[RMDB]
RNA sequence: GGGAACGACUCGAGUAGAGUCGAAAAACAUUCAUUUAUUUUUUCUUGCUGAAUGUGUUUUGCAUACGGCUUUUUACCAACAUCGAUAAUUUCAGUAGUCAAAUUCGCAUAUUGUAAAAUUAACGGACACAACUCUUAAAUUCGUUUAAGAGUUGUGAAAAGAAACAACAACAACAAC
Reactivity to 2A3 in 0.01 (KOAc 150mM, MgCl2 10mM, bicine 150mM(pH8.5), 24C), signal-to-noise 3, nucleotides 027 to 126: a000c020a030u000u040c010a010u080u140u240a190u130u190u160u020u020u030c050u060u060g020c020u020g010a080a020u030g040u000g010u040u040u090u100g000c000a010u040a070c120g040g000c000u090u040u010u040u100a050c010c020a070a060c030a090u150c060g020a030u050a110a040u100u100u000c020a030g030u050a010g020u040c030a030a070a140u120u100c080g020c100a030u050a030u170u050g030u030a030a000a000a070u060u050a080a030c030g040g060a010
Reactivity to DMS in 0.01 (KOAc 150mM, MgCl2 10mM, bicine 150mM(pH8.5), 24C), signal-to-noise 4, nucleotides 027 to 126: a040c010a010u000u000c020a030u010u000u010a020u020u000u020u010u020u010c040u010u010g030c300u010g000a020a010u000g000u000g010u000u000u010u010g020c030a050u000a080c220g000g010c010u000u000u000u000u000a070c040c040a070a060c090a050u000c100g000a050u000a060a040u000u010u000c020a060g000u000a060g020u000c100a020a030a060u000u000c160g000c050a060u000a060u000u000g010u000a020a020a020a030u010u010a120a110c090g020g020a260

Source: RMDB library OK2TRN, as collected in RNAgym. Structure probing data (2A3 and DMS) for a 177-nucleotide construct. The RNA was probed in 150 mM KOAc, 10 mM MgCl2 and 150 mM bicine (pH 8.5) at 24 C. DMS adducts were read by reverse transcription with MarathonRT. For 2A3, 2,857 sequencing reads were counted. For 2A3 the reverse transcriptase was SuperScript II with manganese.